[RMDB]
RNA sequence: GGGAACGACUCGAGUAGAGUCGAAAAGAAAAUAAGUGCGUAAUCGCGUCUUGACGUGAGUGAGCCCACACGAAUAGCUAUCCCAAGUGGGAUAGCAUAGCUCACAAUACGCUAAGAUUCGUGUGAAGGACCUAUUAUACUUCGGUAUAAUAGGUCCAAAAGAAACAACAACAACAAC
Reactivity to DMS in 0.01 (KOAc 150mM, MgCl2 10mM, bicine 150mM(pH8.5), 24C), signal-to-noise 3, nucleotides 027 to 126: g020a130a090a080a040u060a050a060g020u000g000c000g000u000a050a300u000c000g000c000g010u000c040u020u020g000a020c000g010u000g010a060g020u010g010a030g000c040c130c010a020c000a010c020g000a000a020u000a060g010c000u000a020u000c000c000c000a300a170g020u030g000g000g000a000u000a000g000c010a040u000a010g000c000u000c050a070c100a110a060u010a020c060g000c000u000a020a050g010a080u000u000c010g020u010g000u010g030a210a130
Reactivity to 2A3 in 0.01 (KOAc 150mM, MgCl2 10mM, bicine 150mM(pH8.5), 24C), signal-to-noise 8, nucleotides 027 to 126: g090a000a060a010a060u250a070a050g060u050g060c000g000u030a060a070u050c010g010c000g040u010c120u110u190g130a030c000g010u000g010a030g020u020g000a030g020c010c020c010a010c000a000c000g010a010a010u020a020g000c000u000a000u030c010c000c000a160a130g270u300g110g000g000a000u000a000g000c000a000u000a000g000c010u020c010a060c000a020a130u100a070c030g000c010u030a040a030g060a160u000u000c010g000u010g000u010g030a070a100